[RMDB]
RNA sequence: GGGAACGACUCGAGUAGAGUCGAAAAAGUCGUAAAGUAAAAGGACGGUCCAGGCACUUGCGCUUUUUUGCCUGCAAAGAAUUCCGGUUUGCCGGUUUUCCCGGCGUCCAGUUUUGGGUAUGAGAGCAGGAUAGAACACAUUCGUGUGUUCUAUCCUAAAAGAAACAACAACAACAAC
Reactivity to DMS in 0.01 (KOAc 150mM, MgCl2 10mM, bicine 150mM(pH8.5), 24C), signal-to-noise 3, nucleotides 027 to 126: a030g010u040c020g040u020a050a030a040g010u010a020a170a080a090g000g010a210c150g020g010u020c040c000a080g000g010c200a030c050u010u000g010c020g000c030u000u010u000u000u000u000g010c000c000u010g000c070a040a050a110g000a070a080u020u010c080c040g000g010u010u020u010g020c010c050g000g020u000u010u010u010c080c030c010g000g000c060g000u020c020c020a070g020u020u000u020u010g000g010g010u020a040u010g010a070g000a090g050c160
Reactivity to 2A3 in 0.01 (KOAc 150mM, MgCl2 10mM, bicine 150mM(pH8.5), 24C), signal-to-noise 3, nucleotides 027 to 126: a000g130u130c020g020u080a080a080a090g020u030a090a130a100a060g060g010a050c050g000g040u100c020c030a050g080g000c040a010c020u020u040g020c000g000c040u000u010u010u000u040u070g040c000c000u010g000c020a010a030a070g070a080a100u240u020c070c060g010g030u020u040u050g050c020c010g020g000u020u020u100u040c030c000c000g020g060c040g010u010c000c010a010g000u040u090u190u120g060g020g010u100a040u100g090a050g010a010g070c060